[RMDB]
Background: Chemical mapping of a 177-nucleotide RNA with DMS and 2A3. Reactivities are rounded to 0.1 and cut off at 0 and 3. The reactions ran in a buffer of 150 mM KOAc, 10 mM MgCl2 and 150 mM bicine (pH 8.5), at 24 C. 2A3 adducts were read by reverse transcription with SuperScript II with manganese. Source: RMDB library OK1LIB, as collected in RNAgym. Values cover nucleotides 27 to 126. For DMS the reverse transcriptase was MarathonRT.
RNA sequence: GGGAACGACUCGAGUAGAGUCGAAAACAUCGACCACCACCCAUCUGGGCGAUGAGCACAUGCUGAUGAUGGAGCGGGAACGGGAAAGGGAGCGCGAAAGGAUCCAGGAGAGGGAACCAUCCAACCACCCAGCUAAAUACUUCGGUAUUUAGCUGGGAAAAGAAACAACAACAACAAC
Reactivity to DMS in 0.01 (KOAc 150mM, MgCl2 10mM, bicine 150mM(pH8.5), 24C), signal-to-noise 3, nucleotides 027 to 126: c100a040u010c050g010a090c010c070a080c070c020a110c030c000c030a050u010c080u010g000g000g000c010g020a030u010g000a150g010c070a030c120a050u010g030c050u000g000a050u010g010a040u000g000g010a110g010c120g000g000g010a170a130c110g010g000g010a060a080a080g010g010g020a120g000c170g020c070g000a060a110a070g000g020a080u010c040c060a090g000g020a070g000a100g010g000g000a040a020c070c060a010u010c080c010a030a090c120c070a180
Reactivity to 2A3 in 0.01 (KOAc 150mM, MgCl2 10mM, bicine 150mM(pH8.5), 24C), signal-to-noise 6, nucleotides 027 to 126: c010a040u070c020g080a080c030c020a040c020c010a050c000c010c000a050u060c080u140g060g000g000c020g050a050u080g040a030g040c060a060c020a150u200g040c020u060g030a110u050g010a050u060g050g010a050g020c070g020g010g020a030a080c060g030g000g040a040a050a050g070g030g010a050g040c060g000c030g100a110a050a010g040g000a020u030c030c020a030g020g010a060g030a030g010g000g020a010a010c010c000a040u050c000c020a020a020c020c020a040